[RMDB]
RNA sequence: GGGAACGACUCGAGUAGAGUCGAAAACAGCGUCAUAGCAUACUGCGAUGUCAACUGGUCAACGUCAUGUAUGCGGUAUAUUGGCUAUGAUUGCGUGAUACGCGUACCACGGUAUUACACGGCUAAUUAACCAGUCACAGCGUACGUGUGCCAACACGGACUAAGGGAGGUUCGCCUCCCUUAGUCCAAAAGAAACAACAACAACAAC
Reactivity to 2A3 in 0.01 (KOAc 150mM, MgCl2 10mM, bicine 150mM(pH8.5), 24C), signal-to-noise 4, nucleotides 027 to 156: c030a020g030c010g000u010c010a020u030a010g010c000a000u010a030c010u020g000c030g060a030u030g080u100c060a090a070c160u150g040g120u160c120a070a040c050g050u040c020a050u130g070u100a070u200g030c010g000g030u030a040u020a020u080u220g120g000c000u010a030u020g030a050u060u240g030c030g000u000g030a010u010a060c040g010c010g050u020a040c020c000a050c070g000g040u050a040u080u110a060c080a070c050g080g000c040u010a010a070u110u060a060a100c010c040a040g010u040c030a020c020a110g050c030g040u020a010c020g000u020g000u000g010c020c020a030a020c050a020c120
Reactivity to DMS in 0.01 (KOAc 150mM, MgCl2 10mM, bicine 150mM(pH8.5), 24C), signal-to-noise 2, nucleotides 027 to 156: c040a110g050c010g000u010c030a090u010a060g000c010a090u000a050c020u000g000c020g010a090u010g000u030c040a080a250c050u000g000g020u000c030a120a070c080g000u000c050a080u000g040u000a060u000g010c000g000g040u000a060u010a140u000u010g000g000c010u000a050u020g000a070u000u000g090c040g020u000g030a110u000a060c000g010c040g080u000a030c030c030a080c040g030g010u010a060u000u010a110c070a110c040g060g030c030u000a070a150u020u010a070a100c020c040a070g000u000c120a070c070a130g010c040g000u000a040c030g040u010g010u000g020c010c020a060a090c110a130c120